Structure probing data (2A3 and DMS) for a 177-nucleotide construct.
RNA sequence: GGGAACGACUCGAGUAGAGUCGAAAAUAUCAGCAAAGGAAACAACCUCAAUCAAAUUUCCUCCACUUUGAACAUACUCGUACAAUGAUAGUGGAACCAAUAAAUUGGCAAUAUGAGUGUGACAAACCUCAGGACGGAUAUUCGUAUCCGUCCUGAGAAAAGAAACAACAACAACAAC
Reactivity to 2A3 in 0.01 (KOAc 150mM, MgCl2 10mM, bicine 150mM(pH8.5), 24C), signal-to-noise 3, nucleotides 027 to 126: u170a030u100c040a010g070c040a100a140a050g070g010a070a080a030c030a030a050c020c020u030c000a040a040u040c040a010a060a180u060u030u020c000c000u020c040c000a040c020u090u000u150g120a030a020c000a020u050a080c000u010c020g010u040a020c050a130a110u180g050a050u140a050g030u050g080g000a050a020c010c000a010a010u250a270a180a120u080u030g020g030c040a010a070u010a020u120g000a000g030u050g000u000g010a010c040a050a010a040c020
Reactivity to DMS in 0.01 (KOAc 150mM, MgCl2 10mM, bicine 150mM(pH8.5), 24C), signal-to-noise 1, nucleotides 027 to 126: u010a030u010c060a100g010c030a050a100a050g010g000a050a110a030c140a030a070c030c030u000c190a110a000u050c100a150a230a130u000u000u000c030c000u000c010c100a160c030u000u000u000g000a120a120c000a000u010a100c100u000c000g030u000a020c110a030a010u000g000a080u000a020g030u000g010g000a000a130c030c040a000a050u030a070a150a020u000u010g070g040c100a070a130u020a030u030g000a040g000u000g030u030g000a150c150a020a030a040c240

It was measured as part of the RMDB library OK1LIB.